[RMDB]
RNA sequence: GGGAACGACUCGAGUAGAGUCGAAAACUCAUUCAUUCCAUCCACUCAACAUAUGUUGAUUAAUCACCUACUUUGUGCCAAGUAUUAUGCUCCAUGAUUGACAGAAAUUACCUCUUUGCUGCACUUCGAAGUAGUCAUUCAAUGCAUAGCUGCUGCCCGUUUUUGACUAGUUCGCUAGUCAAAAACGAAAAGAAACAACAACAACAAC
Reactivity to 2A3 in 0.01 (KOAc 150mM, MgCl2 10mM, bicine 150mM(pH8.5), 24C), signal-to-noise 6, nucleotides 027 to 156: c030u050c040a080u190u090c030a030u110u040c030c020a070u050c060c020a080c040u050c020a050a050c020a100u180a120u300g030u040u040g020a100u090u120a140a060u090c040a070c050c010u070a060c030u100u100u130g040u070g040c040c020a030a020g030u020a090u180u030a030u120g020c020u030c070c050a050u080g040a080u070u070g020a060c040a050g110a030a100a060u110u110a100c010c010u010c010u050u060u070g000c030u030g010c020a020c000u050u080c090g010a040a010g020u070a030g030u050c010a030u060u030c040a070a050u070g010c000a020u040a060g020c020u050g000c020u030g010c030c010
Reactivity to DMS in 0.01 (KOAc 150mM, MgCl2 10mM, bicine 150mM(pH8.5), 24C), signal-to-noise 2, nucleotides 027 to 156: c050u000c030a130u030u000c060a130u010u000c000c010a100u000c040c000a160c090u000c010a060a060c030a200u010a040u020g020u010u000g020a080u000u010a130a140u000c020a060c030c000u000a030c050u010u000u010g020u000g020c040c060a140a110g020u000a070u000u000a110u010g020c020u000c010c060a060u000g020a050u000u000g020a110c060a100g000a050a080a080u000u000a070c040c020u030c040u000u000u000g020c030u010g030c020a080c030u000u000c080g060a050a090g020u000a050g030u000c050a120u000u000c060a050a110u000g020c030a070u000a100g020c000u000g010c030u010g010c020c070